This 177-nucleotide RNA was probed chemically with DMS and 2A3. For DMS, 1,765 sequencing reads were counted. 2A3 adducts were read by reverse transcription with SuperScript II with manganese. The reactions ran in a buffer of 150 mM KOAc, 10 mM MgCl2 and 150 mM bicine (pH 8.5), at 24 C. For DMS the reverse transcriptase was MarathonRT. In probing experiments dimethyl sulfate is read out at A N1 and C N3, which are open when not base-paired.
[RMDB]
RNA sequence: GGGAACGACUCGAGUAGAGUCGAAAAGUAUCGGGAUCUUCUGCCGCCCGAUGUCCGGGCCAGGUGAAGCCGAGCACCGUUACAUCGGCGCCCGCGCGGCGCAAUCCAUCGAUAACAGCGGCAUUGAGGGUAAAUUACUGUUCGCAGUAAUUUACCCAAAAGAAACAACAACAACAAC
Reactivity to DMS in 0.01 (KOAc 150mM, MgCl2 10mM, bicine 150mM(pH8.5), 24C), signal-to-noise 2, nucleotides 027 to 126: g000u010a040u000c010g010g000g010a210u010c040u010u000c030u010g070c070c100g010c010c030c020g000a100u010g000u020c270c000g030g000g020c010c080a120g010g040u000g000a060a140g000c030c030g000a070g020c080a140c000c000g000u000u000a100c130a040u000c000g000g020c090g000c000c040c030g000c240g000c090g020g000c030g000c070a040a060u010c030c060a070u020c030g000a050u010a040a100c140a050g010c060g020g010c090a070u020u000g020a270
Reactivity to 2A3 in 0.01 (KOAc 150mM, MgCl2 10mM, bicine 150mM(pH8.5), 24C), signal-to-noise 1, nucleotides 027 to 126: g060u050a060u130c020g000g030g080a060u040c020u110u030c040u050g030c010c040g000c050c010c010g000a050u040g090u010c040c000g000g030g020c020c080a080g000g010u020g090a080a010g030c000c000g010a010g000c040a060c030c000g010u050u070a020c030a070u030c000g050g000c000g050c000c000c000g210c070g010c210g010g000c000g000c020a000a050u050c000c020a090u160c000g020a010u020a050a050c050a050g040c030g000g020c020a020u060u100g090a120